[RMDB]
RNA sequence: GGGAACGACUCGAGUAGAGUCGAAAAGAUAUGGAACUGAUCUCCCUACUCGCGUUGAAAUCGGAAACGAUGGAGCGAGGUCAGGGAUCUCAGUUCCUAAGUCAAAAUCCCACGUUCGCGUGGGAAACGAUAGAUACGUCUUCGGACGUAUCUAUCGAAAAGAAACAACAACAACAAC
Reactivity to DMS in 0.01 (KOAc 150mM, MgCl2 10mM, bicine 150mM(pH8.5), 24C), signal-to-noise 4, nucleotides 027 to 126: g000a020u010a300u010g000g000a010a010c010u000g000a010u000c150u000c000c010c010u000a110c000u000c000g020c020g010u000u000g020a110a190a020u000c000g010g000a120a080a210c010g020a010u000g000g010a090g020c000g010a010g020g000u000c200a000g010g010g000a000u000c160u010c000a010g000u000u000c000c000u000a020a050g000u010c040a120a070a100a110u010c000c000c000a010c000g010u000u000c180g030c010g030u000g000g000g000a000a010a050
Reactivity to 2A3 in 0.01 (KOAc 150mM, MgCl2 10mM, bicine 150mM(pH8.5), 24C), signal-to-noise 2, nucleotides 027 to 126: g010a000u080a050u150g010g000a000a010c010u010g000a020u020c010u050c050c000c000u010a030c010u010c000g000c030g300u300u050g050a020a020a000u020c010g000g000a100a040a030c030g000a020u030g030g000a020g010c000g000a000g010g030u100c160a010g000g000g020a000u000c020u000c010a000g000u000u000c000c000u000a020a000g030u000c000a000a010a010a240u040c000c000c010a000c000g000u050u070c300g000c010g120u010g000g010g000a050a050a020

Chemical mapping of a 177-nucleotide RNA with DMS and 2A3. The reactions ran in a buffer of 150 mM KOAc, 10 mM MgCl2 and 150 mM bicine (pH 8.5), at 24 C. Values cover nucleotides 27 to 126. The 2A3 profile rests on 7,759 reads. 2A3 adducts were read by reverse transcription with SuperScript II with manganese.